About this RNA:
The record gives the reactivity of an RNA of 177 nucleotides to 2A3 and DMS.
[RMDB]
RNA sequence: GGGAACGACUCGAGUAGAGUCGAAAACUUUGAUGAGUACGACUAAGUGGUGCAUGGCCGUUCACAACAUGUGAGGUGACUUUUAGGUUUAUUGCUGUAAUGUGUGAGACCCUCAGCUACGGCGACUCGAUAUGAAUCUGUUCGCAGAUUCAUAUCGAAAAGAAACAACAACAACAAC
Reactivity to 2A3 in 0.01 (KOAc 150mM, MgCl2 10mM, bicine 150mM(pH8.5), 24C), signal-to-noise 2, nucleotides 027 to 126: c050u050u060u180g120a110u090g010a040g040u040a040c020g040a030c080u080a150a040g060u030g110g030u030g000c000a040u040g030g000c010c010g000u070u050c050a020c010a020a150c030a080u140g050u040g040a030g080g010u050g060a070c010u030u090u120u190a050g020g010u050u100u090a090u080u120g020c040u020g050u080a090a110u080g060u000g020u040g040a030g020a010c020c000c030u040c070a010g000c010u000a000c000g020g030c010g020a040c040u000
Reactivity to DMS in 0.01 (KOAc 150mM, MgCl2 10mM, bicine 150mM(pH8.5), 24C), signal-to-noise 2, nucleotides 027 to 126: c080u000u000u000g010a090u000g020a090g000u010a050c100g000a060c050u000a070a100g040u010g010g000u010g000c030a080u000g000g010c020c030g000u000u000c030a040c090a090a120c140a040u020g020u010g010a070g010g020u000g010a080c110u010u010u010u020a070g000g000u010u000u000a090u020u020g000c010u000g010u010a070a060u000g000u020g020u010g000a050g010a080c060c020c020u000c060a140g010c070u010a060c050g020g010c030g000a070c140u000
The RNA was probed in 150 mM KOAc, 10 mM MgCl2 and 150 mM bicine (pH 8.5) at 24 C. The data come from the RNA Mapping Database (RMDB), library RFMREP.